Conditions: 150 mM KOAc, 10 mM MgCl2 and 150 mM bicine (pH 8.5), 24 C. Structure probing data (DMS and 2A3) for a 177-nucleotide construct.

RNA sequence: GGGAACGACUCGAGUAGAGUCGAAAAACCAAUGGGGAAACCACGUUGAGAGACCGGACCCGACAGUGAGGGACGAAAGCCAGGGUCUCGAACCGGAUUAGAUACCCGGGUAGUCCUGGCUGUAAACGAACUUAAUUAUCUUCGGAUAAUUAAGUUCAAAAGAAACAACAACAACAAC
Reactivity to DMS in 0.01 (KOAc 150mM, MgCl2 10mM, bicine 150mM(pH8.5), 24C), signal-to-noise 4, nucleotides 027 to 126: a130c030c010a110a090u010g010g010g000g000a150a080a100c050c040a040c150g010u000u000g020a160g010a090g000a080c050c080g010g000a100c030c010c020g010a110c090a080g000u000g000a100g010g010g010a100c110g000a120a090a030g020c010c000a010g000g020g000u020c060u000c110g000a070a180c010c000g000g020a040u000u000a110g000a160u010a080c100c000c010g010g010g010u010a100g010u000c010c000u010g000g020c000u000g000u000a020a070a070c210
Reactivity to 2A3 in 0.01 (KOAc 150mM, MgCl2 10mM, bicine 150mM(pH8.5), 24C), signal-to-noise 2, nucleotides 027 to 126: a000c030c000a020a040u130g010g000g000g040a040a060a090c010c000a060c040g030u030u070g080a070g000a010g030a050c040c030g000g040a070c010c000c010g000a040c030a020g100u050g100a160g010g000g010a020c010g050a140a040a010g010c000c000a000g010g040g020u060c050u020c100g010a050a020c010c010g010g000a010u050u050a060g040a110u080a040c000c010c020g000g010g010u040a010g010u000c000c000u010g000g020c010u020g070u050a020a060a010c050
Values cover nucleotides 27 to 126.